[RMDB]
RNA sequence: GGGAACGACUCGAGUAGAGUCGAAAAGAUAUGGAGAUACCAUGGAGCUAUGUAUCGGAAACGAUAUGCAUAGCUAUGAAGUGGUGAUCUCCUAAGUCAAAAUCACGAGUAGUUCGCUACUCGUGAACCUAUUAGGUCUGUUCGCAGACCUAAUAGGAAAAGAAACAACAACAACAAC
Reactivity to DMS in 0.01 (KOAc 150mM, MgCl2 10mM, bicine 150mM(pH8.5), 24C), signal-to-noise 5, nucleotides 027 to 126: g020a020u000a180u010g000g000a020g020a060u000a030c000c000a000u000g000g030a050g030c000u000a000u000g000u000a010u000c010g010g010a050a040a090c000g020a010u000a040u020g030c250a020u000a010g020c000u000a170u020g010a180a220g010u000g000g000u000g010a050u000c000u000c000c010u010a000a050g000u000c010a090a070a120a160u000c000a000c000g000a020g020u000a010g010u000u020c270g010c000u000a000c000u000c000g010u000g010a010a080
Reactivity to 2A3 in 0.01 (KOAc 150mM, MgCl2 10mM, bicine 150mM(pH8.5), 24C), signal-to-noise 6, nucleotides 027 to 126: g010a010u020a020u060g000g000a010g000a010u030a020c000c020a010u030g060g050a120g000c000u000a000u030g010u000a010u010c010g000g010a020a010a000c020g010a010u030a020u210g140c050a020u010a000g010c010u050a300u130g040a020a000g010u000g000g030u120g100a080u020c000u000c010c000u000a010a000g000u000c020a030a030a040a300u050c000a000c010g000a000g010u010a000g020u080u090c300g040c200u000a000c000u000c000g000u010g000a000a010